Overview: Chemical mapping of a 177-nucleotide RNA with DMS and 2A3. For DMS, 1,604 sequencing reads were counted.
[RMDB]
RNA sequence: GGGAACGACUCGAGUAGAGUCGAAAAGAGAGAAACCAUUUACAUGCACCCAGUGUGGUAAGAGUUUCACACGAUCAUCACACCUUAAUAGACACAUGAUGAUCCACACCGGAGAGAGACCGUUCAACGGUAAUCAUGCAUUCGUGCAUGAUUACCGAAAAGAAACAACAACAACAAC
Reactivity to DMS in 0.01 (KOAc 150mM, MgCl2 10mM, bicine 150mM(pH8.5), 24C), signal-to-noise 3, nucleotides 027 to 126: g010a130g030a090g000a090a070a080c010c040a170u000u010u010a050c080a090u010g030c080a070c030c040c060a200g010u000g000u000g000g020u000a030a050g000a300g000u000u010u020c060a060c100a070c130g000a050u000c000a010u000c010a060c130a110c080c090u000u020a110a090u020a090g000a050c140a070c140a100u000g000a070u000g000a010u000c020c120a030c080a030c110c030g000g000a080g000a080g000a080g010a100c000c040g000u000u000c200a080a140
Reactivity to 2A3 in 0.01 (KOAc 150mM, MgCl2 10mM, bicine 150mM(pH8.5), 24C), signal-to-noise 2, nucleotides 027 to 126: g150a010g020a000g030a010a020a030c010c000a040u040u060u090a060c080a060u110g030c030a010c010c040c060a070g040u010g000u040g000g020u020a070a030g080a020g030u000u090u120c050a060c010a010c070g020a030u000c000a000u020c000a030c000a030c090c000u110u090a200a030u110a210g100a000c030a000c010a150u030g020a020u020g010a000u040c010c000a040c030a030c010c030g000g000a030g010a000g000a010g020a050c000c030g010u070u060c070a120a040
For DMS the reverse transcriptase was MarathonRT. It was measured as part of the RMDB library OK2TRN. 2A3 adducts were read by reverse transcription with SuperScript II with manganese. The reactions ran in a buffer of 150 mM KOAc, 10 mM MgCl2 and 150 mM bicine (pH 8.5), at 24 C.